[RMDB]
RNA sequence: GGGAACGACUCGAGUAGAGUCGAAAAUUUCUCCACCGUCAAUCUCGUCAGUAUUGACAAUACUGUAUUAUGGAGCUAAUGGAUCCACUGCUGAACAGCUAUCAAAAUAUGUAGAAAAGGAGGCGGACAAGAAUAAGGAUGAUAUCUCAUUCAAGUCUGAUUAUAGUUGAUUCGUCAACUAUAAUCAAAAAGAAACAACAACAACAAC
Reactivity to DMS in 0.01 (KOAc 150mM, MgCl2 10mM, bicine 150mM(pH8.5), 24C), signal-to-noise 4, nucleotides 027 to 156: u010u010u010c020u000c000c050a150c050c050g020u000c040a070a070u000c020u000c070g010u000c040a100g010u000a070u000u000g010a130c110a160a190u000a030c020u000g020u000a110u000u000a070u000g020g010a070g020c060u010a070a140u010g010g000a090u000c030c000a050c050u000g030c080u010g010a080a140c040a080g000c030u000a090u000c050a040a080a100a100u000a060u000g010u000a130g000a060a050a050a130g030g010a070g010g010c020g020g020a040c040a050a120g000a020a040u000a050a090g000g010a080u010g010a110u000a220u010c050u000c010a050u000u010c020a060a160g010u000c070
Reactivity to 2A3 in 0.01 (KOAc 150mM, MgCl2 10mM, bicine 150mM(pH8.5), 24C), signal-to-noise 7, nucleotides 027 to 156: u030u040u020c040u000c010c010a060c020c030g020u030c030a040a090u020c060u040c100g100u050c050a030g010u030a040u040u070g060a020c000a010a000u050a020c010u030g050u060a080u150u050a090u270g040g010a020g020c040u120a170a040u110g050g020a050u020c030c020a050c060u100g010c030u040g050a090a040c010a050g030c030u060a040u170c060a030a020a090a080u150a070u130g070u070a030g080a060a070a010a000g060g010a030g010g010c000g000g020a030c030a080a020g070a050a080u140a130a040g020g010a010u010g010a010u070a130u170c060u020c060a040u060u030c020a060a040g070u020c040
The record gives the reactivity of an RNA of 207 nucleotides to DMS and 2A3. For 2A3 the reverse transcriptase was SuperScript II with manganese.